Structure probing data (2A3 and DMS) for a 170-nucleotide construct. The reactions ran in a buffer of 150 mM KOAc, 10 mM MgCl2 and 150 mM bicine (pH 8.5), at 24 C. Reactivities are given for positions 27 through 129. 2A3 adducts were read by reverse transcription with SuperScript II with manganese.
[RMDB]
RNA sequence: GGGAACGACUCGAGUAGAGUCGAAAAUCACGCGGUAGGAGCAAGCCCAUAGCGAUAGGGGGAGAUGCUGGGAGUUAGAGGAGACCUUAGGGGAGACCGAAGCGAGGAGGAAAGCAAAGAAAGCAACAUACAUCCGCCUUCGGGCGGAUGAAAAGAAACAACAACAACAAC
Reactivity to 2A3 in 0.01 (KOAc 150mM, MgCl2 10mM, bicine 150mM(pH8.5), 24C), signal-to-noise 2, nucleotides 027 to 129: u130c000a020c040g020c010g070g000u020a000g020g000a010g010c000a000a020g000c000c000c000a110u060a020g120c070g090a100u030a030g000g010g010g010g010a030g010a030u030g040c040u050g000g000g000a000g030u040u020a000g000a020g000g000a020g030a000c000c000u000u090a020g000g000g000g000a010g010a000c000c030g020a030a020g050c040g000a000g010g000a000g020g000a040a000a000g030c080a060a020a030g040a080a110a000g090c080a030a070c010a030u100a060
Reactivity to DMS in 0.01 (KOAc 150mM, MgCl2 10mM, bicine 150mM(pH8.5), 24C), signal-to-noise 3, nucleotides 027 to 129: u020c040a240c070g010c050g010g100u040a020g010g000a000g040c070a140a060g000c080c040c000a180u090a070g000c080g000a040u020a060g030g010g050g000g000a070g010a070u010g040c080u090g020g060g030a050g050u010u010a050g020a010g020g010a120g000a030c110c020u060u040a060g050g000g060g000a100g040a050c050c020g060a130a010g020c160g120a060g070g000a030g110g050a030a050a040g030c190a040a000a100g020a000a030a050g010c120a000a000c190a070u090a140